Background:
An RNA of 207 nucleotides, treated with DMS and 2A3 and read out base by base. Values cover nucleotides 27 to 156.
RNA sequence: GGGAACGACUCGAGUAGAGUCGAAAAGCACUCGUACUCCAAUCGCUGUAAUCAAUAGUUGCAAACGAUGACAACUACGGUGCUCAACUAGCUGCGUAAGCAGUGAAAGAUCACUUUUAGGGUUACGACCCUAUCGGUCUCUAGCAAGGUGCCUGUAGAAAAGGUAUAUCUUCGGAUAUACCUUUUCAAAAGAAACAACAACAACAAC
Reactivity to DMS in 0.01 (KOAc 150mM, MgCl2 10mM, bicine 150mM(pH8.5), 24C), signal-to-noise 4, nucleotides 027 to 156: g020c010a010c020u000c020g030u000a050c070u000c040c030a160a040u000c020g040c030u000g020u010a030a040u000c010a170a100u000a180g010u000u000g000c010a040a100a040c010g010a050u010g010a260c090a030a050c000u000a040c030g020g020u000g000c030u000c050a080a050c050u000a130g010c020u000g010c010g000u010a160a220g020c000a020g010u000g010a110a090a090g000a040u000c030a100c090u000u000u000u000a040g020g020g030u000u000a120c210g020a100c000c010c000u000a010u000c070g010g010u000c010u010c020u000a050g030c030a030a140g020g000u000g000c020c020u000g000u000a220
Reactivity to 2A3 in 0.01 (KOAc 150mM, MgCl2 10mM, bicine 150mM(pH8.5), 24C), signal-to-noise 8, nucleotides 027 to 156: g020c010a010c020u210c060g030u040a020c030u030c050c040a060a050u030c030g010c040u030g030u130a030a050u100c110a040a160u080a220g020u020u020g020c020a070a090a080c050g050a050u080g050a050c020a070a020c060u040a030c040g010g000u000g000c000u000c010a030a030c010u020a010g020c010u010g000c010g060u110a120a060g000c010a010g000u020g050a020a040a010g010a020u020c020a020c080u050u110u070u070a020g020g000g000u020u060a050c160g050a050c040c000c000u020a040u060c050g020g020u010c010u000c020u060a040g030c040a060a040g050g010u020g010c000c000u060g000u090a030